[RMDB]
RNA sequence: GGGAACGACUCGAGUAGAGUCGAAAAUCAUACUUCUUCGGAAGUAUGACAAUAAAAUCAGGGGUAAAUAAUUAGCUCCGGUUACCGCUGAACCGGAGCAUAUAAGCGGGGCGUUCGCGCCCCGCAAUCCAAUCAACUAGUUCGCUAGUUGAUUGGAAAAAGAAACAACAACAACAAC
Reactivity to DMS in 0.01 (KOAc 150mM, MgCl2 10mM, bicine 150mM(pH8.5), 24C), signal-to-noise 1, nucleotides 027 to 126: u010c010a000u000a010c010u000u000c000u020u000c170g040g000a000a010g010u000a000u000g000a030c100a110a110u000a060a040a100a080u010c020a080g000g000g000g010u000a060a110a140u000a030a050u010u030a080g000c000u000c000c020g000g020u000u000a020c030c080g000c060u020g000a020a020c010c000g000g000a020g010c000a000u030a010u000a100a080g030c030g000g050g020g040c000g040u000u040c160g010c010g050c000c010c000c000g020c010a000a010